The data come from the RNA Mapping Database (RMDB), library TTRDES. Structure probing data (DMS and 2A3) for a 177-nucleotide construct. The reactions ran in a buffer of 150 mM KOAc, 10 mM MgCl2 and 150 mM bicine (pH 8.5), at 24 C. For 2A3 the reverse transcriptase was SuperScript II with manganese.

RNA sequence: GGGAACGACUCGAGUAGAGUCGAAAAGAUAUGGAGCUGUUGGUGGACAUGCUGUAGAGGUUCGGAAACGAACCGAUCAGCAACAGCCACCACCAGCUCCUAAGUCAAAGAUGCGUUCGCGCAUCAACAACAGUAGAAGGUUCGCCUUCUACUGUUGAAAAGAAACAACAACAACAAC
Reactivity to DMS in 0.01 (KOAc 150mM, MgCl2 10mM, bicine 150mM(pH8.5), 24C), signal-to-noise 8, nucleotides 027 to 126: g010a040u000a300u010g010g010a010g020c010u000g000u000u000g000g010u000g000g010a040c110a200u000g010c000u000g000u010a040g010a300g000g010u000u010c000g000g000a100a120a270c010g010a010a010c000c000g000a120u000c000a010g010c010a020a060c300a200g000c000c000a000c000c000a000c030c000a000g000c010u000c000c000u000a000a080g010u010c050a130a140a130g000a010u000g010c000g020u000u000c230g030c010g010c000a010u000c010a130a240
Reactivity to 2A3 in 0.01 (KOAc 150mM, MgCl2 10mM, bicine 150mM(pH8.5), 24C), signal-to-noise 5, nucleotides 027 to 126: g020a010u100a040u200g000g000a000g000c010u010g000u030u010g000g010u020g010g020a080c060a230u090g000c000u010g030u090a070g050a060g120g000u000u000c010g020g010a080a100a090c000g000a010a010c010c000g000a030u010c010a000g030c000a010a020c060a020g050c000c000a000c000c000a000c010c000a010g000c000u000c000c000u010a010a000g010u010c010a030a040a090g010a000u000g000c000g030u060u100c300g000c000g010c160a010u000c010a000a050